[RMDB]
RNA sequence: GGGAACGACUCGAGUAGAGUCGAAAAGAGCCUAGAGCUUGAGUGAUACUAUCUAGCUUAAGUUUUAGUCAUCUUUGGUAGUGUAGUUUUAAGACUUGACGCACCUUAAAGUGAAGUUUAGUCUAGUCAAAUUUGUAAGUUUUGGAAGAUGAGCGGACCAUACUUGUACCUUCGGGUACAAGUAUGGAAAAGAAACAACAACAACAAC
Reactivity to 2A3 in 0.01 (KOAc 150mM, MgCl2 10mM, bicine 150mM(pH8.5), 24C), signal-to-noise 6, nucleotides 027 to 156: g020a010g020c010c010u010a010g010a000g010c000u000u010g000a000g010u050g020a040u070a230c120u100a080u150c040u070a020g020c000u000u000a010a000g010u010u010u010u060a030g030u020c040a200u020c170u020u050u080g020g010u060a090g030u020g040u070a090g020u040u030u040u130a120a020g000a000c000u000u020g010a010c000g000c020a010c010c010u070u170a120a140a020g030u020g120a160a020g010u050u090u150a010g000u010c020u020a020g010u030c030a040a060a100u100u120u100g090u100a090a120g020u030u040u090u100g060g020a040a030g020a060u060g000a010g060c020g000g040a010
Reactivity to DMS in 0.01 (KOAc 150mM, MgCl2 10mM, bicine 150mM(pH8.5), 24C), signal-to-noise 2, nucleotides 027 to 156: g030a190g010c290c000u000a040g030a040g000c030u000u000g000a000g010u020g000a300u000a300c040u000a090u000c030u010a300g000c000u000u000a000a070g020u000u000u000u000a090g000u010c060a070u010c020u000u000u000g050g050u000a060g010u010g000u000a080g010u000u000u000u000a130a170g030a060c000u000u000g010a050c030g030c050a050c010c010u000u000a060a080a090g000u000g000a060a060g040u010u000u010a040g020u000c030u000a090g030u000c050a050a070a140u000u000u020g010u000a060a120g010u000u000u000u000g010g000a040a080g010a090u000g000a070g040c050g000g000a170